[RMDB]
RNA sequence: GGGAACGACUCGAGUAGAGUCGAAAAGGUAUCGAGACGCUCUUCAAGGGCUCCGCCGACCGCAUGAAGACGUACGCCGCUGACGCGUACAAGACGGCUGGCCUGUCAGCGAACGAGUACAUGGAGCUCUUGCUUGUAGGUUCGCCUACAAGCAAGAAAAAGAAACAACAACAACAAC
Reactivity to 2A3 in 0.01 (KOAc 150mM, MgCl2 10mM, bicine 150mM(pH8.5), 24C), signal-to-noise 2, nucleotides 027 to 126: g100g040u090a040u160c050g010a010g010a040c040g040c040u040c030u150u080c120a080a210g000g020g020c050u000c020c000g010c000c000g040a060c020c000g090c100a100u240g080a120a020g080a010c090g030u010a010c020g010c010c000g010c040u030g010a020c010g020c010g000u020a020c020a000a000g030a020c000g010g020c000u040g040g030c000c030u040g010u020c020a010g000c010g020a040a050c070g020a040g040u030a050c050a120u090g070g020a010g000c000
Reactivity to DMS in 0.01 (KOAc 150mM, MgCl2 10mM, bicine 150mM(pH8.5), 24C), signal-to-noise 3, nucleotides 027 to 126: g030g000u000a080u010c040g000a080g010a160c050g010c040u000c030u000u000c070a060a180g000g020g010c010u010c030c090g010c000c020g020a080c050c010g010c060a130u000g000a090a140g010a150c190g000u000a020c010g020c020c070g030c130u000g000a060c120g010c040g020u000a010c030a040a060g010a120c020g010g000c060u000g010g020c030c060u010g010u000c020a040g000c050g030a140a140c110g010a090g010u000a060c150a120u000g020g000a040g030c070